This 177-nucleotide RNA was probed chemically with DMS. For DMS, 681 sequencing reads were counted. Conditions: 150 mM KOAc, 10 mM MgCl2 and 150 mM bicine (pH 8.5), 24 C. For DMS the reverse transcriptase was MarathonRT.
RNA sequence: GGGAACGACUCGAGUAGAGUCGAAAAUCGUGCGUGCGACAUGCUUUGCCUGAUCGGUGGCAUUCUGCACCGAUUCCAGGCGCACAUGGCGGCCUGCAUGAAAAUGAGCAUAGCUCGCACAAUCGCACACGUCCGACCAUUUCGAUGGUCGGACGUGAAAAGAAACAACAACAACAAC
Reactivity to DMS in 0.01 (KOAc 150mM, MgCl2 10mM, bicine 150mM(pH8.5), 24C), signal-to-noise 1, nucleotides 027 to 126: u010c080g000u000g020c300g000u000g060c010g040a090c150a010u000g000c000u040u000u030g000c000c000u000g000a100u000c000g000g000u010g010g080c000a160u000u010c300u000g010c000a050c000c000g000a040u000u010c180c010a010g020g000c010g000c220a240c060a090u000g000g010c090g010g000c120c090u010g000c000a000u000g000a020a060a050a050u040g000a000g000c010a020u000a130g000c080u000c000g010c040a010c060a020a250u000c090g000c170a080